[RMDB]
RNA sequence: GGGAACGACUCGAGUAGAGUCGAAAAGAUAUGGACGACAGGGAGCUGCAUCUCGGAAACGAGAUGACAGCAUCGAUCUGUGUCCUAAGUCAAAAGACGAAUGCUUACUUCGGUAAGCAUUCGUCAAGCUACUAAUGUUGUUCGCAACAUUAGUAGCAAAAGAAACAACAACAACAAC
Reactivity to DMS in 0.01 (KOAc 150mM, MgCl2 10mM, bicine 150mM(pH8.5), 24C), signal-to-noise 6, nucleotides 027 to 126: g000a030u000a300u010g000g000a010c000g020a020c010a010g010g010g000a030g030c000u010g000c000a000u000c000u010c010g020g000a060a060a130c000g010a010g000a010u000g000a110c010a000g010c000a130u000c150g000a030u010c000u000g010u000g010u000c000c000u000a020a120g000u010c030a060a070a120a140g000a010c000g000a010a000u000g000c000u000u000a010c000u000u020c220g030g000u000a000a010g010c000a000u000u000c000g010u000c000a010a040
Reactivity to 2A3 in 0.01 (KOAc 150mM, MgCl2 10mM, bicine 150mM(pH8.5), 24C), signal-to-noise 3, nucleotides 027 to 126: g010a020u040a030u110g010g010a010c060g020a000c160a010g000g030g030a030g010c000u010g010c000a010u010c000u000c000g000g040a100a050a020c010g000a000g000a000u050g020a030c000a010g000c020a050u040c000g000a030u020c000u000g020u000g000u000c000c000u020a260a030g090u020c040a000a020a090a170g000a000c000g000a010a010u000g000c010u000u000a000c010u040u100c300g060g000u000a010a000g000c000a000u000u010c000g000u010c000a000a000